[RMDB]
RNA sequence: GGGAACGACUCGAGUAGAGUCGAAAAUUGAUAUCUGCUAAAACCCGGUGCAUUCAUCAAUGCAGUUUAAGCCAAAGGGAUGUCCCGACCGGAGGCCGACAAUCCAGGGAACCGGAUGUCAUCACGUAAAACCGUCAGUUCUUCGGAACUGACGGAAGAGUAUGUGUUAGUUCGCUAACACAUACUCAAAAGAAACAACAACAACAAC
Reactivity to 2A3 in 0.01 (KOAc 150mM, MgCl2 10mM, bicine 150mM(pH8.5), 24C), signal-to-noise 2, nucleotides 027 to 156: u040u010g010a010u010a000u020c010u020g030c100u130a070a060a130a200c010c000c010g010g020u010g000c000a010u000u160c050a120u130c090a150a030u020g000c010a010g020u010u090u160a050a000g000c000c000a010a010a000g010g020g000a030u040g040u020c010c000c000g010a000c000c010g000g010a010g020g000c000c000g000a010c030a070a080u060c020c040a080g000g000g020a010a010c030c020g000g000a010u010g000u010c020a020u070c060a040c110g130u140a010a060a020a190c000c000g000u000c000a000g000u000u000c000u010u090c140g080g000a000a000c000u000g000a000c000g000g000a000a000
Reactivity to DMS in 0.01 (KOAc 150mM, MgCl2 10mM, bicine 150mM(pH8.5), 24C), signal-to-noise 3, nucleotides 027 to 156: u010u010g010a050u010a020u000c000u000g010c010u010a080a120a070a240c010c000c040g050g040u000g010c010a060u000u010c110a140u010c070a090a130u000g020c010a150g020u000u000u000a160a070g000c000c000a020a300a300g020g000g000a040u000g010u000c010c000c000g000a120c000c040g000g000a300g000g030c000c000g020a100c120a050a160u000c030c060a100g000g040g010a100a070c130c010g020g000a040u000g010u000c010a100u000c100a070c080g000u010a070a060a080a120c000c000g020u000c000a030g030u000u000c010u000u000c300g040g010a020a020c000u000g010a000c000g010g010a000a030